[RMDB]
RNA sequence: GGGAACGACUCGAGUAGAGUCGAAAAGCACGUCCGGUAAGCCCCGUGCGAACACUUGAGCUCCGGCUUGGCCGCUCUUGUGGAUUAGGACGUUCUAGCUCCGGCUUGGCCGCUAGUUCGUCCGAAAGGACUGACUGCGAUUCGUCGCAGUCAGUCCAAAAGAAACAACAACAACAAC
Reactivity to 2A3 in 0.01 (KOAc 150mM, MgCl2 10mM, bicine 150mM(pH8.5), 24C), signal-to-noise 3, nucleotides 027 to 126: g000c000a010c010g020u060c070c040g070g090u160a110a040g120c060c020c010c010g000u000g040c030g000a060a010c000a000c010u000u000g000a000g030c090u060c130c040g120g010c060u210u240g130g020c050c000g000c000u000c000u000u000g020u020g030g000a030u070u120a040g000g000a000c000g020u000u030c000u010a010g000c060u040c110c020g010g140c080u110u270g130g000c030c020g000c020u000a000g000u000u000c000g000u000c000c000g010a080a050a020
Chemical mapping of a 177-nucleotide RNA with 2A3. It was measured as part of the RMDB library OK1LIB. For 2A3 the reverse transcriptase was SuperScript II with manganese.